[RMDB]
RNA sequence: GGGAACGACUCGAGUAGAGUCGAAAAGCUAUGAGGAUCAGACAGUUUUAGUUAACUACUCCUAAAAAAAUAUCAGAGGACAAUUAUCUGAGGAAUGAAUCGCUUUGAAGUAGUACACUUUGAAACUACAUUUAUUCAUUUUGUGUAGCUUGUCUGACCUAAAUGGCCAGUUCGCUGGCCAUUUAGGAAAAGAAACAACAACAACAAC
Reactivity to 2A3 in 0.01 (KOAc 150mM, MgCl2 10mM, bicine 150mM(pH8.5), 24C), signal-to-noise 1, nucleotides 027 to 156: g020c020u020a100u090g030a030g020g020a030u070c000a000g030a030c030a030g030u040u020u070u040a080g000u180u000a150a020c020u030a020c020u090c010c080u110a120a040a000a040a000a000a000u100a020u100c050a000g000a020g120g040a030c070a160a100u300u140a030u080c000u050g000a050g050g020a050a030u080g010a080a130u070c070g060c130u000u130u070g020a040a020g000u080a030g030u040a000c010a020c080u040u180u210g050a120a000a000c020u130a020c000a070u030u090u100a070u030u300c050a120u040u060u080u110g020u000g050u000a040g020c020u050u090g000u000c050u010g000a010